RNA sequence: GGGAACGACUCGAGUAGAGUCGAAAAAGAACAGCAGAUAAACCAUCACUGGCACAAAUCUGGGAGCAGCAUUGGAAAGGCCUUUACCACCACACUCAGAGGAGCUCAACGACUCGCAGCUCUUGGACUAUGCGUAGGGUUUCGACCCUACGCAUAGAAAAGAAACAACAACAACAAC
Reactivity to 2A3 in 0.01 (KOAc 150mM, MgCl2 10mM, bicine 150mM(pH8.5), 24C), signal-to-noise 4, nucleotides 027 to 126: a000g110a050a030c050a040g050c010a020g040a090u090a050a100a040c030c010a010u090c040a020c070u050g030g040c070a020c030a070a100a060u010c030u030g030g010g010a030g030c040a000g000c030a070u030u110g060g060a080a070a060g030g000c010c000u060u050u060a060c030c010a010c000c000a020c010a000c030u040c030a010g020a040g100g020a010g010c000u010c050a020a120c050g090a110c020u030c050g020c030a030g020c010u000c000u030u050g030g010a010
Reactivity to DMS in 0.01 (KOAc 150mM, MgCl2 10mM, bicine 150mM(pH8.5), 24C), signal-to-noise 2, nucleotides 027 to 126: a070g000a100a140c100a060g000c030a020g040a060u010a030a080a050c060c040a050u010c060a060c040u000g000g040c030a050c080a030a040a050u020c030u010g030g000g000a070g000c070a020g030c090a040u020u000g000g050a080a000a080g020g030c020c050u000u010u030a070c080c040a090c030c050a100c050a040c050u000c030a050g000a060g000g010a100g080c040u020c070a030a110c010g010a050c030u010c050g000c050a120g000c040u000c000u000u020g000g030a250
The record gives the reactivity of an RNA of 177 nucleotides to 2A3 and DMS. The 2A3 profile rests on 4,292 reads. It was measured as part of the RMDB library OK1LIB. The RNA was probed in 150 mM KOAc, 10 mM MgCl2 and 150 mM bicine (pH 8.5) at 24 C. Values cover nucleotides 27 to 126. For DMS the reverse transcriptase was MarathonRT.